[RMDB]
RNA sequence: GGGAACGACUCGAGUAGAGUCGAAAAGUCAGCUUCGGCUGACAAGAAGAUAUGGAUAGAGAACGCGCUAUAGGGAGGAGAUAUAUCGGAAACGAUAUAUCCUCCGAAGAACUAUAGCUAAGCUCUAUCCUAAGUCGCAAUAGGGGUUCGCCCCUAAUGUUGCAGCUAAUUUCGAUUAGCUGCAACAAAAAGAAACAACAACAACAAC
Reactivity to 2A3 in 0.01 (KOAc 150mM, MgCl2 10mM, bicine 150mM(pH8.5), 24C), signal-to-noise 1, nucleotides 027 to 156: g020u000c000a000g010c000u040u140c260g230g000c000u010g000a010c000a010a030g100a050a020g000a000u020a000u050g000g000a010u000a000g010a000g000a080a100c010g040c000g000c060u010a010u000a000g040g000g000a000g010g000a010g000a010u000a000u000a000u000c000g020g000a000a000a000c000g000a000u000a000u000a000u000c030c130u000c000c000g000a030a030g000a000a000c000u000a000u000a000g010c000u010a030a020g010c000u010c020u000a000u000c000c000u000a000a010g000u010c010g010c090a030a140u050a080g010g030g010g010u060u100c160g230c000c000c000c000u080a050a050

Structure probing data (2A3) for a 207-nucleotide construct.
The reactions ran in a buffer of 150 mM KOAc, 10 mM MgCl2 and 150 mM bicine (pH 8.5), at 24 C.
Values are in units of 0.01, from 0 to 300, in steps of 10.
2A3 adducts were read by reverse transcription with SuperScript II with manganese.
Values cover nucleotides 27 to 156.